This 177-nucleotide RNA was probed chemically with 2A3 and DMS. For 2A3, 2,648 sequencing reads were counted. Reactivities are given for positions 27 through 126. For 2A3 the reverse transcriptase was SuperScript II with manganese. DMS adducts were read by reverse transcription with MarathonRT. Source: RMDB library OK1LIB, as collected in RNAgym.
RNA sequence: GGGAACGACUCGAGUAGAGUCGAAAACGAGCGUUCUGUAGCGGAGCGGCGCGAAAUUUGUCCUCGGCAGUGAGCAUCGCCCUAACCUCCAUCUUUUUUCGUGCAUUUCUCACCGUCACAAUCAACACUAGCGUCAGUAGUUCGCUACUGACGCUAGAAAAGAAACAACAACAACAAC
Reactivity to 2A3 in 0.01 (KOAc 150mM, MgCl2 10mM, bicine 150mM(pH8.5), 24C), signal-to-noise 4, nucleotides 027 to 126: c030g010a040g050c040g000u030u040c010u030g100u080a030g060c030g020g010a020g010c010g060g000c000g000c010g020a010a040a100u160u100u090g100u060c000c000u010c020g020g050c010a010g000u010g110a040g020c030a060u060c080g020c000c010c000u020a040a040c000c000u020c050c000a090u040c030u060u090u030u000u020u040c050g010u040g020c040a080u020u140u040c040u010c030a030c000c050g060u060c000a010c050a110a120u120c030a020a060c040a020
Reactivity to DMS in 0.01 (KOAc 150mM, MgCl2 10mM, bicine 150mM(pH8.5), 24C), signal-to-noise 1, nucleotides 027 to 126: c020g010a060g000c050g000u010u000c000u000g020u000a170g000c000g000g030a010g090c120g000g000c000g060c060g020a010a020a050u000u050u000g000u000c000c090u020c050g000g000c000a160g000u040g000a090g000c080a030u000c120g000c030c010c000u000a160a150c080c050u000c040c040a050u010c010u000u000u000u000u000u000c060g010u000g000c090a130u000u000u050c010u000c010a060c060c050g000u030c040a040c210a160a000u000c040a020a010c220a060
The RNA was probed in 150 mM KOAc, 10 mM MgCl2 and 150 mM bicine (pH 8.5) at 24 C.